[RMDB]
RNA sequence: GGGAACGACUCGAGUAGAGUCGAAAAGGCUGGUCAUUUGGCAUUAGCAUAUUAUCCUCGAUCCCACAUGGGCUAAUUGCAUGGUGAAGGACACUAUAUGCUGAAUUCAACUCCAUGGUGGAAGAACUGUUAGUGCGUUUUUCGAAACGCACUAACAAAAAGAAACAACAACAACAAC
Reactivity to DMS in 0.01 (KOAc 150mM, MgCl2 10mM, bicine 150mM(pH8.5), 24C), signal-to-noise 2, nucleotides 027 to 126: g010g020c010u000g000g010u040c020a220u010u000u010g010g010c060a050u000u010a020g010c020a010u000a060u000u000a130u000c010c010u000c070g020a110u010c060c020c020a050c030a030u000g000g000g000c110u000a060a080u000u000g020c000a040u000g010g000u020g030a140a140g000g020a210c040a020c040u010a040u010a050u000g000c050u010g000a030a050u010u000c170a030a050c090u000c000c010a020u000g000g030u010g000g010a080a090g010a080a060c270
Reactivity to 2A3 in 0.01 (KOAc 150mM, MgCl2 10mM, bicine 150mM(pH8.5), 24C), signal-to-noise 2, nucleotides 027 to 126: g030g000c040u010g030g070u020c040a160u210u120u190g070g010c000a020u060u050a030g020c000a000u060a040u230u060a050u040c000c010u000c020g040a170u100c000c010c000a020c020a030u060g000g040g030c020u080a140a030u100u110g000c020a010u050g000g000u040g030a210a130g220g060a040c020a010c040u090a060u000a010u300g000c000u000g050a090a030u110u040c030a060a010c020u000c030c000a020u040g060g000u010g010g020a070a080g020a140a100c030
An RNA of 177 nucleotides, treated with DMS and 2A3 and read out base by base. The 2A3 profile rests on 1,426 reads. For DMS, 1,532 sequencing reads were counted. Source: RMDB library OK2TRN, as collected in RNAgym.